[RMDB]
RNA sequence: GGGAACGACUCGAGUAGAGUCGAAAACAUCUAGAUGAGACAGAGCUGGUGGGGCAGGACAAAGACUCCUGGCAGCUCAAACGGCCUGGCAGAUGCUUGGAGAGAGGGGGCUUCUUGAGACAGCACCCAUGGUUGUCACGUUCGCGUGACAACCAUGAAAAGAAACAACAACAACAAC
Reactivity to 2A3 in 0.01 (KOAc 150mM, MgCl2 10mM, bicine 150mM(pH8.5), 24C), signal-to-noise 3, nucleotides 027 to 126: c010a070u040c040u100a050g030a180u090g050a050g030a060c020a030g050a000g000c000u070g040g200u060g010g060g020g040c000a010g020g040a010c030a060a190a040g050a020c020u020c010c000u020g020g030c000a010g000c000u000c000a060a060a000c030g060g010c010c010u020g020g030c010a020g010a050u090g040c090u030u050g050g000a050g010a010g010a050g040g010g000g000g000c010u060u010c000u040u070g010a050g000a000c040a020g000c010a030c000c000
Reactivity to DMS in 0.01 (KOAc 150mM, MgCl2 10mM, bicine 150mM(pH8.5), 24C), signal-to-noise 3, nucleotides 027 to 126: c050a060u010c030u040a030g000a130u010g020a140g000a110c140a120g000a060g010c040u000g000g020u000g000g020g020g020c060a070g000g000a090c230a140a090a060g010a120c070u010c030c010u020g010g000c020a040g000c040u010c040a010a070a090c070g000g000c040c010u000g000g000c110a060g000a070u000g020c040u000u030g010g000a090g030a060g000a140g000g000g010g000g000c010u000u010c020u030u040g000a040g000a060c070a010g000c190a090c040c040
Notes: Chemical mapping of a 177-nucleotide RNA with 2A3 and DMS. DMS adducts were read by reverse transcription with MarathonRT. High 2A3 reactivity points to a flexible backbone, as in loops and unpaired stretches.